[RMDB]
RNA sequence: GGGAACGACUCGAGUAGAGUCGAAAAAACUCUUUAAGGCAAAAACGAACUAAUUCUAAGCAAGUAAUGGAGAAAUGCCAGGGUCACUAUCUAGCCAUAAUAGUGCUUGACAGUAUGAUACUAACUGAAUAUGGUAAACCGUUCGCGGUUUACCAAAACAUAGUGUUGUCUUCGGACAACACUAUGUAAAAGAAACAACAACAACAAC
Reactivity to 2A3 in 0.01 (KOAc 150mM, MgCl2 10mM, bicine 150mM(pH8.5), 24C), signal-to-noise 2, nucleotides 027 to 156: a000a000c080u130c000u040u070u070a110a020g040g000c010a000a060a070a070a000c030g040a030a030c020u050a050a060u110u070c030u150a060a080g040c020a050a040g010u160a060a070u080g050g020a020g060a070a090a050u090g020c030c030a010g010g000g000u020c010a010c020u020a040u000c010u030a010g040c010c000a010u060a190a050u020a130g070u050g080c000u050u100g020a020c000a010g040u060a040u090g100a070u050a120c030u070a180a070c020u010g050a070a090u120a070u190g010g000u010a000a000a000c000c000g010u030u050c280g000c020g070g020u000u000u000a000c000c000a010a020a000
Reactivity to DMS in 0.01 (KOAc 150mM, MgCl2 10mM, bicine 150mM(pH8.5), 24C), signal-to-noise 2, nucleotides 027 to 156: a030a050c020u020c030u000u000u000a070a090g010g010c000a020a040a100a090a070c040g020a120a050c030u000a050a060u020u000c050u000a080a110g000c050a080a090g000u000a080a100u010g020g010a080g010a080a070a060u000g020c010c030a060g020g000g020u000c020a050c030u000a010u010c040u000a070g010c040c080a100u000a030a100u010a050g030u000g000c020u000u010g010a040c000a050g040u000a070u000g020a170u020a070c120u020a080a140c040u020g010a030a070u000a130u000g020g020u000a010a000a020c000c000g060u000u010c240g000c000g000g000u000u000u000a000c000c000a000a010a040
An RNA of 207 nucleotides, treated with 2A3 and DMS and read out base by base. For DMS, 3,445 sequencing reads were counted. DMS adducts were read by reverse transcription with MarathonRT. Values cover nucleotides 27 to 156. The data come from the RNA Mapping Database (RMDB), library M2RFPK. The RNA was probed in 150 mM KOAc, 10 mM MgCl2 and 150 mM bicine (pH 8.5) at 24 C.